[RMDB]
The record gives the reactivity of an RNA of 177 nucleotides to DMS and 2A3. The data come from the RNA Mapping Database (RMDB), library 15KREP. For 2A3, 1,780 sequencing reads were counted. The RNA was probed in 150 mM KOAc, 10 mM MgCl2 and 150 mM bicine (pH 8.5) at 24 C.
RNA sequence: GGGAACGACUCGAGUAGAGUCGAAAAUUCGAGGAUCUCCUCCCUCUCCUUCGAGGACGGGUUCGCGACGGGUUGGCUCAUCCUGAGAUCGGGGAGCCUCGACGAUCUCUUUGAUCUCCUGAAGGAGCCUAUGUCUACGGUUCGCCGUAGACAUAGGAAAAGAAACAACAACAACAAC
Reactivity to DMS in 0.01 (KOAc 150mM, MgCl2 10mM, bicine 150mM(pH8.5), 24C), signal-to-noise 1, nucleotides 027 to 126: u000u000c040g010a000g000g010a190u000c080u000c040c030u000c040c040c030u000c030u010c040c160u000u000c110g000a080g010g000a070c110g000g030g010u000u010c090g000c030g010a060c140g010g000g020u020u010g000g030c010u000c020a070u000c010c030u000g030a090g000a010u000c040g040g000g000g030a010g000c030c010u000c030g010a080c180g010a050u010c010u000c020u000u000u010g020a060u000c030u000c000c190u020g000a080a100g010g000a030g000
Reactivity to 2A3 in 0.01 (KOAc 150mM, MgCl2 10mM, bicine 150mM(pH8.5), 24C), signal-to-noise 2, nucleotides 027 to 126: u030u030c020g010a010g030g010a080u060c050u050c030c010u000c010c000c000u040c010u010c020c010u040u040c040g100a020g000g000a010c000g030g010g010u040u180c020g030c020g100a100c080g190g110g030u090u090g040g010c020u000c000a070u040c010c010u010g020a010g010a040u080c060g010g000g000g000a000g000c000c000u000c000g040a050c040g030a060u040c040u000c020u110u050u070g030a030u000c020u020c020c060u080g000a070a040g010g000a000g000